This 177-nucleotide RNA was probed chemically with DMS and 2A3. The DMS profile rests on 2,249 reads. Source: RMDB library OK2TRN, as collected in RNAgym. The RNA was probed in 150 mM KOAc, 10 mM MgCl2 and 150 mM bicine (pH 8.5) at 24 C. Values are in units of 0.01, from 0 to 300, in steps of 10. DMS adducts were read by reverse transcription with MarathonRT.
RNA sequence: GGGAACGACUCGAGUAGAGUCGAAAAGGGGCUGUGUGCGAGCUGCAGAUCUGUGGCCUGGCUGUGGCAGAUGCUGGGGAGUACUCCUGUGUGUGUGGGGAGGAGAGGACCUCUGCCACUCUCACCGCUAGUUUAGCCAGUUCGCUGGCUAAACUAGAAAAGAAACAACAACAACAAC
Reactivity to DMS in 0.01 (KOAc 150mM, MgCl2 10mM, bicine 150mM(pH8.5), 24C), signal-to-noise 2, nucleotides 027 to 126: g040g000g020g000c050u020g040u000g020u000g000c050g000a070g000c020u000g000c030a050g000a060u000c090u010g010u000g010g020c040c050u020g000g010c090u000g010u000g000g010c070a070g000a080u010g000c080u010g010g020g000g000a190g010u010a120c080u000c020c030u010g020u000g010u000g000u010g010u030g020g010g010g010a050g000g000a070g010a090g020g000a110c060c050u000c000u000g030c020c000a020c000u000c040u000c020a070c040c160g000
Reactivity to 2A3 in 0.01 (KOAc 150mM, MgCl2 10mM, bicine 150mM(pH8.5), 24C), signal-to-noise 1, nucleotides 027 to 126: g030g000g030g020c030u030g020u040g010u060g130c050g040a050g010c000u010g000c010a040g010a220u090c020u180g050u080g030g010c050c000u000g000g060c050u030g000u050g050g000c000a000g000a070u100g000c070u070g010g000g010g080a070g020u060a010c040u040c000c040u030g030u000g010u000g000u000g020u060g030g010g000g010a040g040g050a030g050a070g080g100a070c000c000u040c020u060g150c020c000a000c020u020c000u020c020a070c010c030g060